The record gives the reactivity of an RNA of 177 nucleotides to DMS.
The data come from the RNA Mapping Database (RMDB), library OK2TST.
For DMS the reverse transcriptase was MarathonRT.
The reactions ran in a buffer of 150 mM KOAc, 10 mM MgCl2 and 150 mM bicine (pH 8.5), at 24 C.
RNA sequence: GGGAACGACUCGAGUAGAGUCGAAAAGAGAUUCUGCCUGUGAACGACCUUGGCCCCCGCCCAGCAGUGUGAACAGAACCCUGAGCGAGGCCACGCAGCCUCCCCAGGCAGGGAGAGCUCCACACAGGAAUUUAGCUCCUUUCGAGGAGCUAAAUUCAAAAGAAACAACAACAACAAC
Reactivity to DMS in 0.01 (KOAc 150mM, MgCl2 10mM, bicine 150mM(pH8.5), 24C), signal-to-noise 1, nucleotides 027 to 126: g010a120g010a120u010u000c020u010g010c020c020u020g010u010g000a070a040c160g020a090c140c010u000u000g000g000c010c050c000c030c080g000c040c010c030a050g010c170a100g000u000g000u010g020a210a100c120a150g040a050a070c050c140c010u010g000a060g050c040g000a070g010g010c000c060a020c220g050c210a120g000c020c000u000c040c010c010c020a090g000g030c110a070g000g000g000a100g010a170g010c040u000c030c020a050c210a150c120a110g000